[RMDB]
RNA sequence: GGGAACGACUCGAGUAGAGUCGAAAAGCACUGGAUACCGACAGUCGAUAUUCUUUGUAUAUUAAGAAUGACACAUUAAUAACCGAGCAAUCGGCAUCCAUUAAUGUUCAGAGCAACGGCUCCAUUAGGUACUAGCUGGAUUCGUCCAGCUAGUACCAAAAGAAACAACAACAACAAC
Reactivity to 2A3 in 0.01 (KOAc 150mM, MgCl2 10mM, bicine 150mM(pH8.5), 24C), signal-to-noise 2, nucleotides 027 to 126: g010c010a010c050u030g030g000a040u010a100c050c000g020a050c070a070g070u090c010g040a080u010a040u180u030c010u080u040u020g070u070a210u020a090u300u120a020a050g020a050a110u100g040a030c000a000c000a130u030u020a000a040u020a010a000c000c010g010a010g000c030a070a090u010c000g040g060c020a040u040c010c010a010u000u010a020a010u020g000u000u080c040a010g010a000g040c030a020a160c060g080g000c010u000c050c010a070u090u110a040
Reactivity to DMS in 0.01 (KOAc 150mM, MgCl2 10mM, bicine 150mM(pH8.5), 24C), signal-to-noise 2, nucleotides 027 to 126: g000c050a000c070u010g010g010a020u000a030c030c020g060a240c190a100g010u010c040g020a060u000a050u010u000c000u000u000u010g010u010a100u000a130u000u010a020a060g010a070a100u000g010a070c130a080c020a010u000u000a020a010u000a100a150c010c010g040a000g000c300a070a090u000c000g010g000c050a130u000c160c070a020u010u010a030a030u000g010u000u000c000a100g030a080g050c110a100a090c110g020g000c300u000c020c080a040u020u010a130

This 177-nucleotide RNA was probed chemically with 2A3 and DMS.
The reactions ran in a buffer of 150 mM KOAc, 10 mM MgCl2 and 150 mM bicine (pH 8.5), at 24 C.
The data come from the RNA Mapping Database (RMDB), library OK2TST.
2A3 adducts were read by reverse transcription with SuperScript II with manganese.